[RMDB]
Chemical mapping of a 207-nucleotide RNA with 2A3 and DMS. Values cover nucleotides 27 to 156. DMS adducts were read by reverse transcription with MarathonRT.

RNA sequence: GGGAACGACUCGAGUAGAGUCGAAAAGGCCAUCGUUUUUACCAGACCAUUUUCGAUGGCCAUAGGUCUGGGUUAUAGUUCAAUCGCCGAGAGGCGUACAGUUAGAGUAGCGAGCUCGAAGCACGCGACCGUUAUGAGCUCGCGAAGGUCGCGGAGACGAUACCGUGAGGUUCGCCUCACGGUAUCGAAAAGAAACAACAACAACAAC
Reactivity to 2A3 in 0.01 (KOAc 150mM, MgCl2 10mM, bicine 150mM(pH8.5), 24C), signal-to-noise 2, nucleotides 027 to 156: g000g000c000c000a010u010c060g070u040u060u180u210u020a040c010c000a030g000a020c000c040a130u010u030u090u100c040g010a030u010g000g000c000c000a000u010a000g020g010u000c000u000g040g000g000u080u160a300u130a090g030u050u060c030a080a040u090c000g000c000c000g030a030g000a010g000g030c020g000u000a000c000a020g050u200u200a000g000a000g070u030a010g010c010g020a000g010c000u010c030g100a080a020g100c030a070c070g050c040g020a050c030c010g000u030u030a100u190g000a020g000c000u030c010g040c000g000a000a000g000g000u000c030g010c070g000g010a050g000a010
Reactivity to DMS in 0.01 (KOAc 150mM, MgCl2 10mM, bicine 150mM(pH8.5), 24C), signal-to-noise 1, nucleotides 027 to 156: g000g030c010c000a020u010c010g000u000u020u010u000u000a080c110c020a070g020a030c060c010a300u000u000u000u010c030g000a050u000g000g000c000c000a010u000a100g010g010u000c010u000g010g000g010u000u010a050u000a100g000u000u000c040a110a150u000c010g010c000c000g070a300g010a300g050g030c000g000u000a000c080a060g010u000u010a060g010a260g010u000a200g000c000g020a050g020c000u000c050g000a110a120g000c090a080c030g070c010g000a140c040c010g020u000u000a140u000g000a060g000c010u000c000g030c000g000a030a080g020g010u000c020g020c000g030g010a170g000a130
The DMS profile rests on 2,632 reads. For 2A3, 948 sequencing reads were counted. Source: RMDB library OK3TST, as collected in RNAgym. The reactions ran in a buffer of 150 mM KOAc, 10 mM MgCl2 and 150 mM bicine (pH 8.5), at 24 C.